[RMDB]
RNA sequence: GGGAACGACUCGAGUAGAGUCGAAAAGGUUUGGAUACAUCACUACAGUUAUGUUUUGAAUUUGCCAGACCUUGUGUUCUGUAACUAGGGCAGGAUUUUUGAAGCUUCUUUUUAGUUGGAACGCCGCAGCAUUGCAGCCACUUUUCAGGGUCUGAGCCUGCAAUAAUUGUUUCGACAAUUAUUGCAGAAAAGAAACAACAACAACAAC
Reactivity to 2A3 in 0.01 (KOAc 150mM, MgCl2 10mM, bicine 150mM(pH8.5), 24C), signal-to-noise 2, nucleotides 027 to 156: g060g000u010u020u050g040g010a100u080a100c010a080u070c060a000c030u180a030c050a140g050u250u170a210u120g010u010u020u030u050g060a150a120u050u130u140g000c010c000a000g000a000c000c000u000u020g000u000g010u000u070c010u010g080u080a060a000c020u030a110g100g010g000c020a030g010g050a100u150u120u090u110u130g120a120a010g050c100u090u030c000u040u140u070u040u070a020g060u090u050g010g010a090a030c020g000c010c070g080c060a030g040c030a080u090u080g000c020a030g030c040c030a080c040u080u090u120u160c090a070g020g060g020u000c020u020g000a020g080c000
Reactivity to DMS in 0.01 (KOAc 150mM, MgCl2 10mM, bicine 150mM(pH8.5), 24C), signal-to-noise 1, nucleotides 027 to 156: g010g000u010u000u010g010g000a150u000a080c080a090u000c050a080c050u000a040c060a100g030u010u010a120u010g030u000u010u030u000g010a040a120u000u000u000g000c010c010a090g000a010c010c010u030u010g030u000g000u020u000c040u040g010u020a070a070c120u020a080g020g040g050c030a060g010g010a090u010u000u010u010u030g000a120a230g030c020u000u000c030u000u000u020u010u000a080g020u000u020g010g030a110a110c130g040c000c040g050c050a100g030c100a100u000u000g040c060a060g020c140c040a080c080u000u000u000u000c090a030g000g000g000u010c030u010g010a120g000c100